[RMDB]
RNA sequence: GGGAACGACUCGAGUAGAGUCGAAAACAGAACCAACCACACAUCUCCGAAAGCACUCACUGCAUGUGGGUGGCCUGAGGUUAUGGCCAGGCGGUACUGAUGUCCAUCCGGAAGGAUACUCUCAGCCUACAAUGUGGGUAUUCGUACCCACAUUGUAAAAAGAAACAACAACAACAAC
Reactivity to 2A3 in 0.01 (KOAc 150mM, MgCl2 10mM, bicine 150mM(pH8.5), 24C), signal-to-noise 4, nucleotides 027 to 126: c020a020g040a040a040c010c000a030a040c020c010a040c010a010c000a070u010c020u020c030c010g040a070a010a010g010c000a000c010u010c000a010c040u230g160c180a200u270g010u010g010g020g010u010g070g040c000c010u060g030a040g010g000u020u050a060u040g070g020c060c020a040g030g000c040g050g000u050a070c020u050g040a090u070g010u000c040c020a030u030c020c020g040g080a070a090g040g000a020u080a120c010u030c000u000c030a020g050c010c000
Reactivity to DMS in 0.01 (KOAc 150mM, MgCl2 10mM, bicine 150mM(pH8.5), 24C), signal-to-noise 7, nucleotides 027 to 126: c080a090g010a110a090c040c020a060a160c040c020a080c150a100c090a040u000c040u000c010c070g010a160a110a080g000c010a030c010u010c010a020c010u000g030c200a090u010g040u000g010g000g000u000g010g000c020c020u000g010a220g010g010u010u010a060u010g010g020c050c100a090g010g030c260g000g020u000a050c040u000g010a060u010g000u000c060c040a080u000c030c020g020g010a100a100g000g000a060u000a050c070u000c040u000c040a090g010c130c070